[RMDB]
RNA sequence: GGGAACGACUCGAGUAGAGUCGAAAAACUUAAGUGAACGUGGGCAUUAGAAUGGAUCGUUACUAGUGGGCCAUUUUUGGUAAGCAGAACUGGCGAUGCGGGAUGAACCGAACGCGAGGUUAAGGUGCCUGAUACUCCUUUUCGAAGGAGUAUCAGGAAAAGAAACAACAACAACAAC
Reactivity to DMS in 0.01 (KOAc 150mM, MgCl2 10mM, bicine 150mM(pH8.5), 24C), signal-to-noise 4, nucleotides 027 to 126: a100c050u010u010a030a070g020u010g000a060a050c110g020u010g000g000g020c030a070u020u020a040g000a070a050u010g010g010a050u020c040g010u010u010a080c070u010a060g000u010g030g000g010c030c000a040u000u000u000u000u010g000g000u020a110a100g020c060a080g000a050a080c030u020g010g010c050g030a020u000g000c060g020g000g000a110u010g000a100a090c030c040g020a040a040c080g000c060g040a110g000g010u010u010a050a110g020g010u010g030
Reactivity to 2A3 in 0.01 (KOAc 150mM, MgCl2 10mM, bicine 150mM(pH8.5), 24C), signal-to-noise 4, nucleotides 027 to 126: a000c050u070u060a080a070g070u030g090a060a000c040g010u030g000g030g030c010a020u080u040a110g120a070a040u110g050g080a050u070c050g020u020u050a070c030u030a050g040u090g030g040g030c000c000a060u050u050u040u020u050g090g000u040a060a050g060c020a000g000a120a010c030u030g060g000c000g040a060u110g040c020g000g010g030a050u100g070a050a050c000c060g020a050a010c040g010c000g040a060g040g030u040u030a020a010g040g020u010g020
Conditions: 150 mM KOAc, 10 mM MgCl2 and 150 mM bicine (pH 8.5), 24 C. This 177-nucleotide RNA was probed chemically with DMS and 2A3. DMS adducts were read by reverse transcription with MarathonRT. It was measured as part of the RMDB libraries RFM100 and RFMREP.